An RNA of 177 nucleotides, treated with 2A3 and read out base by base. It was measured as part of the RMDB library OK1LIB. Reactivities are given for positions 27 through 126.
[RMDB]
RNA sequence: GGGAACGACUCGAGUAGAGUCGAAAAAUGCCGCAUUCAGCGACGGUUACUCUAGUGGGCAACUGUCUAUCUAGCGUUGACAUCUACAUACUAUAUAGUAAUACCAAUACUCAAGACUACGAAACGGGAUCGCGGAUGAUUUCGAUCAUCCGCGAUCAAAAGAAACAACAACAACAAC
Reactivity to 2A3 in 0.01 (KOAc 150mM, MgCl2 10mM, bicine 150mM(pH8.5), 24C), signal-to-noise 1, nucleotides 027 to 126: a000u170g000c000c000g000c000a170u290u300c000a130g000c000g100a000c060g010g090u000u000a000c000u000c020u030a080g000u130g000g000g000c020a130a160c300u000g000u020c130u050a190u010c000u030a050g040c000g060u000u060g000a000c000a000u010c060u150a140c000a000u140a000c000u050a000u060a000u060a060g000u000a030a000u000a080c020c020a060a060u000a030c000u000c100a080a080g000a030c050u080a060c170g150a190a080a000c110g000g130